The record gives the reactivity of an RNA of 177 nucleotides to DMS and 2A3. Reactivities are given for positions 27 through 126.

RNA sequence: GGGAACGACUCGAGUAGAGUCGAAAAGCGUGAUCUCUGGCCCAUUGUCGAGAAUGGUGGCGAUGCGCCCGUUGAACAGAACGACAAUGUGGUCGCUCAGGCGCAGCAAUUCAUCGAGAUCGGCGCAGAGUCAGUGAGUGUUCGCACUCACUGACUCAAAAGAAACAACAACAACAAC
Reactivity to DMS in 0.01 (KOAc 150mM, MgCl2 10mM, bicine 150mM(pH8.5), 24C), signal-to-noise 1, nucleotides 027 to 126: g040c060g010u000g010a030u010c000u020c020u000g000g010c000c000c030a020u000u000g030u000c040g030a050g010a130a050u010g020g060u000g000g000c030g000a170u000g010c060g000c000c000c070g070u000u010g030a110a140c120a110g000a160a110c030g010a020c010a020a040u000g000u000g050g000u000c000g000c040u000c110a110g000g000c050g000c020a060g000c050a080a090u000u000c180a100u010c130g000a020g010a000u000c020g010g020c000g020c010a110
Reactivity to 2A3 in 0.01 (KOAc 150mM, MgCl2 10mM, bicine 150mM(pH8.5), 24C), signal-to-noise 2, nucleotides 027 to 126: g000c010g020u050g010a020u000c010u020c040u050g010g000c020c000c000a000u000u050g000u000c030g020a030g140a280a180u120g200g050u170g010g000c030g090a140u090g030c000g000c000c000c000g060u000u050g040a130a070c030a070g080a110a040c030g010a000c010a010a060u130g140u240g050g000u010c030g000c000u000c030a010g090g010c050g000c020a010g000c000a000a100u210u150c020a120u080c060g010a000g000a040u010c090g080g020c030g000c030a010

2A3 adducts were read by reverse transcription with SuperScript II with manganese. The reactions ran in a buffer of 150 mM KOAc, 10 mM MgCl2 and 150 mM bicine (pH 8.5), at 24 C.